An RNA of 207 nucleotides, treated with DMS and 2A3 and read out base by base. For 2A3, 3,515 sequencing reads were counted. For DMS the reverse transcriptase was MarathonRT. It was measured as part of the RMDB library M2RFPK.
[RMDB]
RNA sequence: GGGAACGACUCGAGUAGAGUCGAAAACCUGGUUUAGGGUUCCAGGCUAGCCCUAUCUAUCGAUCGAGAUGCGAGCGCUUAAGCUCAAAUUGAGUGGCUGAGUUAGUGGUGAACGUAUCCCUAUGUUAAAACGGUAGCUGCUUCGGCAGCUACCGAAGUAAUAUCCUAUGUUCGCAUAGGAUAUUACAAAAGAAACAACAACAACAAC
Reactivity to DMS in 0.01 (KOAc 150mM, MgCl2 10mM, bicine 150mM(pH8.5), 24C), signal-to-noise 2, nucleotides 027 to 156: c010c020u010g000g010u000u000u000a060g020g010g010u000u000c020c030a090g030g020c010u000a190g000c010c010c000u010a050u000c050u000a100u000c030g000a100u010c030g010a180g020a080u000g030c300g020a050g000c020g030c220u000u000a070a140g060c030u000c030a030a150a080u000u010g020a200g030u000g000g000c070u020g030a080g010u010u000a060g010u010g030g020u000g010a060a090c040g020u000a090u000c010c010c020u000a130u000g000u000u000a060a070a120a130c000g040g020u000a000g000c000u000g020c010u000u010c280g040g020c000a030g010c000u000a000c000c010g020a010a030
Reactivity to 2A3 in 0.01 (KOAc 150mM, MgCl2 10mM, bicine 150mM(pH8.5), 24C), signal-to-noise 4, nucleotides 027 to 156: c000c000u000g030g020u050u050u070a050g000g020g000u060u050c020c020a020g010g040c030u030a020g000c010c010c020u020a030u040c010u010a070u080c010g080a020u030c020g020a000g010a100u050g040c030g020a010g000c030g010c160u260u250a130a020g010c020u010c000a000a030a020u030u020g010a000g010u040g040g000c020u030g030a030g060u030u030a020g000u090g160g000u030g020a080a020c040g030u070a070u070c000c000c000u040a080u100g090u050u130a070a080a020a020c010g010g000u000a000g010c000u010g000c020u060u080c190g070g000c000a000g000c010u000a000c000c000g000a000a000